[RMDB]
RNA sequence: GGGAACGACUCGAGUAGAGUCGAAAACACCAGGAAAGCCCUUUCACGAGAGGGCAGGAGCCAUUUCUAGAGGUCUGUCCUGGAGGCGGAGAACCACCCUGACUUCUCUUCUGAAGACCUGAGUGAGUCCAUCCCUGUGUUUCGACACAGGGAUGGAAAAAGAAACAACAACAACAAC
Reactivity to DMS in 0.01 (KOAc 150mM, MgCl2 10mM, bicine 150mM(pH8.5), 24C), signal-to-noise 1, nucleotides 027 to 126: c070a220c010c000a020g040g000a070a080a090g000c000c000c010u000u000u000c070a090c300g010a090g010a030g000g000g010c010a010g010g000a040g050c000c020a080u040u000u020c070u000a120g010a050g000g000u000c010u000g000u010c050c070u000g070g010a180g010g060c100g010g000a100g000a040a090c090c090a130c010c010c030u000g010a110c030u010u000c030u000c090u050u010c090u020g000a110a020g020a100c100c000u010g000a090g000u000g000a120g010

Chemical mapping of a 177-nucleotide RNA with DMS. The reactions ran in a buffer of 150 mM KOAc, 10 mM MgCl2 and 150 mM bicine (pH 8.5), at 24 C. It was measured as part of the RMDB library OK2TRN. The DMS profile rests on 789 reads.